Overview: Conditions: 150 mM KOAc, 10 mM MgCl2 and 150 mM bicine (pH 8.5), 24 C. This 177-nucleotide RNA was probed chemically with 2A3.
RNA sequence: GGGAACGACUCGAGUAGAGUCGAAAAUUAUCAGCAUGCACUGGAUCUUCAGCCGUCACAUGUUGACGCACGUAUCAAUUAUUCGUCAAUUCAGCAACGUUUGGGUAUGGUUGAUGAAGCAUUUGAACGGGUGGAUGGCUUUCGAGCCAUCCACCCGAAAAGAAACAACAACAACAAC
Reactivity to 2A3 in 0.01 (KOAc 150mM, MgCl2 10mM, bicine 150mM(pH8.5), 24C), signal-to-noise 2, nucleotides 027 to 126: u160u040a040u010c130a010g000c010a000u100g000c080a010c000u040g130g000a040u020c000u300u210c200a000g040c090c000g070u070c000a040c080a130u130g130u030u000g000a000c020g080c020a010c050g030u000a130u190c000a010a040u100u000a030u020u020c000g010u000c000a020a020u300u240c030a040g090c180a180a080c130g060u010u000u300g230g000g000u110a180u150g080g000u010u000g000a040u010g000a000a000g060c150a070u000u040u080g040a170a040